[RMDB]
RNA sequence: GGGAACGACUCGAGUAGAGUCGAAAAGAUAUGGAAUCCCACCAGCUUUGAUCGAGUGUAUCGGAAACGAUACCUCGGGAGCUGAUGGGAUUCCUAAGUCAAAGCCAAAUUGUUCGCAAUUUGGCAACAGUGAAAAAUUGUUCGCAAUUUUUCACUGAAAAGAAACAACAACAACAAC
Reactivity to DMS in 0.01 (KOAc 150mM, MgCl2 10mM, bicine 150mM(pH8.5), 24C), signal-to-noise 3, nucleotides 027 to 126: g000a030u010a300u000g000g000a010a000u000c010c000c000a010c010c000a000g020c000u000u000u010g010a050u010c000g000a020g010u010g030u000a000u000c000g000g000a090a040a160c000g030a010u010a000c000c000u000c000g010g000g000a000g000c000u010g010a010u010g010g010g010a000u000u000c000c000u000a010a050g010u010c040a120a140a200g010c000c000a020a010a020u000u000g000u010u010c280g030c020a000a010u000u000u000g000g000c010a040a040
Reactivity to 2A3 in 0.01 (KOAc 150mM, MgCl2 10mM, bicine 150mM(pH8.5), 24C), signal-to-noise 2, nucleotides 027 to 126: g000a020u060a040u140g000g000a000a000u030c000c020c000a010c000c010a000g040c030u300u300u170g130a120u300c000g000a010g010u300g000u070a000u000c020g040g050a080a050a060c010g000a000u000a010c000c000u010c000g000g010g000a010g000c010u010g000a020u000g000g000g010a000u000u000c000c000u000a020a000g010u010c040a160a050a050g010c000c010a000a010a000u030u010g030u050u120c300g000c180a010a000u000u000u010g010g000c010a000a000